The record gives the reactivity of an RNA of 177 nucleotides to DMS.
The reactions ran in a buffer of 150 mM KOAc, 10 mM MgCl2 and 150 mM bicine (pH 8.5), at 24 C.
RNA sequence: GGGAACGACUCGAGUAGAGUCGAAAAGCGCGUCUUGGGCCCCUUAUUAGGCACAGUAAGGCAUAGAAAACUGUCUGAUUCCGGCCGAGUUUCCAGGCUAAGUGGGAAGGUGGAACACAGCAUAUGAACCUGGCAUAUGGUUCGCCAUAUGCCAGGUAAAAGAAACAACAACAACAAC
Reactivity to DMS in 0.01 (KOAc 150mM, MgCl2 10mM, bicine 150mM(pH8.5), 24C), signal-to-noise 1, nucleotides 027 to 126: g010c060g010c110g020u000c030u010u000g040g000g020c030c070c060c060u000u000a080u000u000a060g020g040c070a030c040a090g020u010a060a090g010g000c040a050u010a130g030a120a050a080a100c090u000g030u000c090u000g000a230u000u000c060c070g020g000c000c050g010a080g030u000u000u030c010c000a120g000g010c070u020a070a100g010u000g000g020g000a080a070g000g030u000g000g000a000a090c050a060c060a100g000c150a100u020a030u000g020a050

It was measured as part of the RMDB library OK2TRN.